[RMDB]
RNA sequence: GGGAACGACUCGAGUAGAGUCGAAAAUGUUACUAAAGGCAUAUUGACAGGCUGUUUUAGUUUUGCCAAGAUGUUAUUUAUGCUUCCACUAGCUUACUUUAGUGAUUCAAAACUCGGCACCACAGAGGGAUUUACUGAUAUUCGUAUCAGUAAAUCCAAAAGAAACAACAACAACAAC
Reactivity to 2A3 in 0.01 (KOAc 150mM, MgCl2 10mM, bicine 150mM(pH8.5), 24C), signal-to-noise 9, nucleotides 027 to 126: u110g010u020u040a020c020u040a030a020a010g020g010c020a010u030a030u030u020g010a020c010a020g020g000c010u040g210u200u100u080u190a050g020u020u080u270u100g010c010c000a030a010g070a060u080g030u090u050a150u100u170u050a070u140g010c000u120u040c060c030a080c090u070a020g030c020u100u130a040c000u050u080u040a030g010u030g050a040u110u070c080a020a030a050a050c020u010c030g020g010c030a020c030c010a040c030a040g070a050g030
Reactivity to DMS in 0.01 (KOAc 150mM, MgCl2 10mM, bicine 150mM(pH8.5), 24C), signal-to-noise 4, nucleotides 027 to 126: u040g010u000u010a060c040u000a030a030a020g000g000c020a010u000a050u010u000g010a040c000a020g010g010c010u000g010u060u040u040u050a020g020u000u020u060u010g020c020c000a060a000g010a040u000g000u010u020a070u030u040u020a030u020g010c020u000u020c070c060a050c130u020a040g000c010u000u010a090c020u000u000u010a020g000u020g000a050u010u010c110a060a030a060a110c020u010c030g000g000c040a030c050c020a040c090a080g010a100g000
Chemical mapping of a 177-nucleotide RNA with 2A3 and DMS. Values are in units of 0.01, from 0 to 300, in steps of 10. The 2A3 profile rests on 14,379 reads. 2A3 adducts were read by reverse transcription with SuperScript II with manganese. The RNA was probed in 150 mM KOAc, 10 mM MgCl2 and 150 mM bicine (pH 8.5) at 24 C. High DMS reactivity at an A or C suggests that its Watson-Crick edge is free. For DMS, 8,806 sequencing reads were counted. Values cover nucleotides 27 to 126.